Chemical mapping of a 177-nucleotide RNA with DMS and 2A3. The data come from the RNA Mapping Database (RMDB), library VIROID. DMS adducts were read by reverse transcription with MarathonRT. The RNA was probed in 150 mM KOAc, 10 mM MgCl2 and 150 mM bicine (pH 8.5) at 24 C. The DMS profile rests on 1,297 reads.

RNA sequence: GGGAACGACUCGAGUAGAGUCGAAAAGCCAGCACUAAGCCGGACGGCGCCCUCGCACCAGUUCCGCUGUGGGUUCGCCUACAAGAACGUACGGUGUUGAGGCCCUGUCCGCCGCUGCGCUGCCACCGGCGGACUAAAACUUCGGUUUUAGUCCGCCAAAAGAAACAACAACAACAAC
Reactivity to DMS in 0.01 (KOAc 150mM, MgCl2 10mM, bicine 150mM(pH8.5), 24C), signal-to-noise 2, nucleotides 027 to 126: g000c040c000a030g010c010a060c030u000a040a040g040c230c020g010g030a000c010g010g010c160g010c190c010c020u010c020g010c010a010c000c000a300g010u000u000c000c010g000c040u000g010u000g020g000g010u010u010c200g010c000c000u000a000c020a020a080g010a050a020c020g010u000a050c300g000g020u000g000u010u020g030a020g000g000c030c110c010u000g000u000c010c010g000c050c300g010c030u000g000c160g030c020u000g010c040c020a140c150c080
Reactivity to 2A3 in 0.01 (KOAc 150mM, MgCl2 10mM, bicine 150mM(pH8.5), 24C), signal-to-noise 1, nucleotides 027 to 126: g020c010c000a000g000c010a020c080u140a000a080g090c070c030g000g000a010c000g010g010c050g020c020c030c000u020c010g010c000a000c000c000a010g000u020u000c000c000g030c040u000g000u000g010g000g030u010u040c200g060c040c030u000a010c010a050a080g010a010a010c000g020u140a010c040g000g000u000g020u050u300g020a010g000g000c000c000c010u030g000u000c000c000g020c000c000g000c000u010g010c090g000c020u030g060c010c010a090c010c030